This 177-nucleotide RNA was probed chemically with 2A3 and DMS. Reactivities are given for positions 27 through 126. Conditions: 150 mM KOAc, 10 mM MgCl2 and 150 mM bicine (pH 8.5), 24 C. 2A3 adducts were read by reverse transcription with SuperScript II with manganese.
RNA sequence: GGGAACGACUCGAGUAGAGUCGAAAAGAUAUGGACCGUACGUUUGCCGAUAAGUCGGUGUCGGAAACGACACUCGACUUUUGACGGCAUUGUACGGUCCUAAGUCAAAGCAAGUGUUCGCACUUGCCCUCCACUAUGUCUUCGGACAUAGUGGAGGAAAAGAAACAACAACAACAAC
Reactivity to 2A3 in 0.01 (KOAc 150mM, MgCl2 10mM, bicine 150mM(pH8.5), 24C), signal-to-noise 4, nucleotides 027 to 126: g030a020u070a050u090g000g010a000c010c010g000u000a010c060g120u040u090u070g020c020c060g090a100u050a200a010g000u010c010g000g000u010g000u000c010g020g030a110a050a040c020g030a010c000a010c040u200c070g010a010c050u000u000u010u020g050a020c030g000g000c000a000u000u020g000u000a000c020g000g000u000c000c000u000a000a000g000u000c010a040a070a000g030c010a000a010g000u010g040u160u210c300g050c130a010c000u020u000g010c000
Reactivity to DMS in 0.01 (KOAc 150mM, MgCl2 10mM, bicine 150mM(pH8.5), 24C), signal-to-noise 5, nucleotides 027 to 126: g010a050u010a300u010g000g000a010c010c000g010u000a000c010g020u000u000u000g040c000c000g020a170u010a010a020g020u000c000g000g000u000g010u000c000g030g000a120a080a260c000g000a020c000a000c010u020c020g050a010c010u000u000u000u000g010a230c110g020g010c000a020u010u010g000u000a020c010g010g000u000c000c010u000a010a060g000u000c040a090a130a170g000c010a010a010g010u000g010u010u000c280g010c010a020c000u000u000g000c000